RNA sequence: GGGAACGACUCGAGUAGAGUCGAAAAUGCUGUUCUGUUAGAUGGAAUAUUCUGUCUGUUAGGUAUAUUUGGUCUAAAGUGUAGUUCAAGUCUAAUAUUUCUUUAUUGAUUUUCUGUUUAGAUGAUCUGUUCAGUGAUGAAAGUAGGGUACUAAAAACGCUAUUACCAUCUUCGGAUGGUAAUAGCGAAAAGAAACAACAACAACAAC
Reactivity to DMS in 0.01 (KOAc 150mM, MgCl2 10mM, bicine 150mM(pH8.5), 24C), signal-to-noise 1, nucleotides 027 to 156: u020g050c050u000g050u020u000c020u000g060u020u000a070g000a080u000g000g010a120a110u000a080u050u000c030u000g000u000c030u010g040u000u010a070g000g030u000a040u010a080u000u000u000g000g000u000c030u000a020a080a140g030u030g010u000a110g010u000u000c060a080a240g020u000c050u000a030a080u000a080u010u000u000c010u000u000u020a080u010u000g020a190u000u020u010u010c000u000g000u000u000u010a030g040a110u000g000a090u000c090u000g040u000u010c050a030g030u000g010a090u010g030a100a050a150g020u000a060g100g020g010u020a170c190u020a110a060a140a060a100
Reactivity to 2A3 in 0.01 (KOAc 150mM, MgCl2 10mM, bicine 150mM(pH8.5), 24C), signal-to-noise 1, nucleotides 027 to 156: u080g000c000u040g020u020u050c020u080g000u050u050a060g000a070u050g030g040a050a040u030a070u100u070c030u000g140u070c020u050g080u080u110a110g000g020u070a100u040a050u030u040u040g000g000u000c000u150a080a030a030g070u010g000u060a010g000u100u040c040a010a000g000u000c020u010a080a080u020a230u150u090u030c020u020u140u230a260u080u060g000a030u060u050u000u100c010u000g090u110u040u040a020g000a020u060g030a050u030c010u030g110u050u040c050a020g040u040g050a090u040g020a140a040a020g020u070a000g080g030g000u130a080c170u290a010a150a040a000a010

Overview: Structure probing data (DMS and 2A3) for a 207-nucleotide construct. High 2A3 reactivity points to a flexible backbone, as in loops and unpaired stretches. Reactivities are given for positions 27 through 156. Conditions: 150 mM KOAc, 10 mM MgCl2 and 150 mM bicine (pH 8.5), 24 C. The 2A3 profile rests on 368 reads.